Background
This 207-nucleotide RNA was probed chemically with DMS and 2A3. 2A3 adducts were read by reverse transcription with SuperScript II with manganese. Values cover nucleotides 27 to 156.
RNA sequence: GGGAACGACUCGAGUAGAGUCGAAAAACAGCGAAAGGCACAAGACUUCGAACAUUAUAGCAGUUAGUAGUUGCCUAAACCCAUUGCAAUAUAUGGGACAGUAGAGGUCGCAAGCCGAUACUGUGCGAAAAGUCGCAAGGUUUCGACCUUGCGACAACUUGGUAUCUUUCUUCGGAAAGAUACCAAGAAAAGAAACAACAACAACAAC
Reactivity to DMS in 0.01 (KOAc 150mM, MgCl2 10mM, bicine 150mM(pH8.5), 24C), signal-to-noise 2, nucleotides 027 to 156: a060c050a130g000c000g010a040a020a050g020g020c020a160c050a200a190g050a050c000u000u000c040g010a080a090c110a110u000u000a120u010a120g050c040a070g000u000u000a090g000u000a140g000u000u010g000c000c020u000a090a050a150c000c010c000a010u000u000g000c050a130a130u000a130u000a030u000g010g010g020a070c030a090g050u000a050g000a300g000g030u000c030g000c270a160a220g000c020c000g000a270u000a010c010u000g030u000g000c000g000a040a120a030a120g020u000c020g000c000a000a020g030g050u000u020u000c290g000a020c000c010u000u000g000c010g000a030c010a000a000
Reactivity to 2A3 in 0.01 (KOAc 150mM, MgCl2 10mM, bicine 150mM(pH8.5), 24C), signal-to-noise 4, nucleotides 027 to 156: a000c040a000g030c020g050a180a080a050g020g030c020a010c050a070a060g060a060c030u060u060c100g100a130a050c050a140u180u250a140u280a130g100c070a010g020u040u070a010g040u040a020g020u080u080g010c010c000u040a090a030a030c000c000c000a000u000u040g020c010a040a000u030a000u010a000u130g010g010g010a000c000a000g010u000a000g020a020g000g010u090c040g010c200a050a030g020c000c010g000a000u010a000c000u000g000u010g010c000g050a040a060a000a090g010u010c000g010c000a000a000g040g010u030u070u130c110g070a060c000c000u000u000g000c010g000a000c000a000a000
The reactions ran in a buffer of 150 mM KOAc, 10 mM MgCl2 and 150 mM bicine (pH 8.5), at 24 C.